[RMDB]
RNA sequence: GGGAACGACUCGAGUAGAGUCGAAAACUGGGUGGGCUGUGAUCCUAUCUGUAGGGCUGGCGAAGUCCUUGUUCCACUCCUUCUUGCAGUGGAUCUUGCCGCUUCUCUGAAUAUGAUUGAAAUGCCCACAGCACUUGCAGAGCAAGCAGAAAAGACAAGUCCGUCGCUAGUUCGCUAGCGACGGACUAAAAGAAACAACAACAACAAC
Reactivity to 2A3 in 0.01 (KOAc 150mM, MgCl2 10mM, bicine 150mM(pH8.5), 24C), signal-to-noise 1, nucleotides 027 to 156: c040u030g090g000g000u000g000g000g000c000u050g080u060g300a000u040c000c000u000a000u000c000u020g110u200a010g090g000g020c180u270g050g020c150g080a040a100g110u170c000c090u110u090g080u080u030c000c000a000c000u050c100c040u300u260c110u120u240g080c090a000g020u000g010g010a080u000c020u000u090g010c010c000g000c030u300u170c000u080c000u000g040a120a000u090a030u080g030a000u000u000g050a100a110a060u090g020c000c000c000a000c000a000g000c000a040c000u000u040g010c030a020g000a000g280c000a000a000g020c060a030g230a040a080a020a000g080a020c140a150
The data come from the RNA Mapping Database (RMDB), library OK3TST. Chemical mapping of a 207-nucleotide RNA with 2A3. The 2A3 profile rests on 409 reads.